Structure probing data (2A3 and DMS) for a 177-nucleotide construct.

RNA sequence: GGGAACGACUCGAGUAGAGUCGAAAAGAUAUGGAAUCCCUAGACAUGAAGACCACUCGGAAACGAGUGUCUUUCAACAGCUAGAGCGAUUCCUAAGUCAAAUCGCAUACAGUUCGCUGUAUGCGAAGAAUCGCUGUAUCUUCGGAUACAGCGAUUCAAAAGAAACAACAACAACAAC
Reactivity to 2A3 in 0.01 (KOAc 150mM, MgCl2 10mM, bicine 150mM(pH8.5), 24C), signal-to-noise 1, nucleotides 027 to 126: g000a000u030a040u030g000g010a030a010u000c000c000c030u000a010g050a110c170a300u300g000a020a000g020a010c090c100a040c150u000c040g000g000a010a010a020c010g000a010g000u020g010u000c000u030u140u000c020a190a170c090a080g030c000u010a020g010a070g070c140g050a050u000u000c010c030u010a010a000g000u000c060a030a010a280u060c020g000c050a000u020a030c000a000g080u070u090c220g120c120u000g000u010a000u030g000c000g000a000a000
Reactivity to DMS in 0.01 (KOAc 150mM, MgCl2 10mM, bicine 150mM(pH8.5), 24C), signal-to-noise 2, nucleotides 027 to 126: g010a010u000a240u010g000g000a010a010u000c000c000c000u000a000g000a010c080a260u050g030a040a010g000a050c300c130a000c020u000c010g020g000a070a100a130c000g030a030g010u000g000u000c000u000u010u000c100a060a050c300a220g010c000u000a000g000a120g010c270g000a020u010u000c000c000u000a000a050g000u000c010a190a080a210u000c020g000c000a020u000a000c000a010g000u010u010c300g000c000u010g000u010a000u000g000c010g010a010a040

Background:
2A3 adducts were read by reverse transcription with SuperScript II with manganese. The DMS profile rests on 1,062 reads.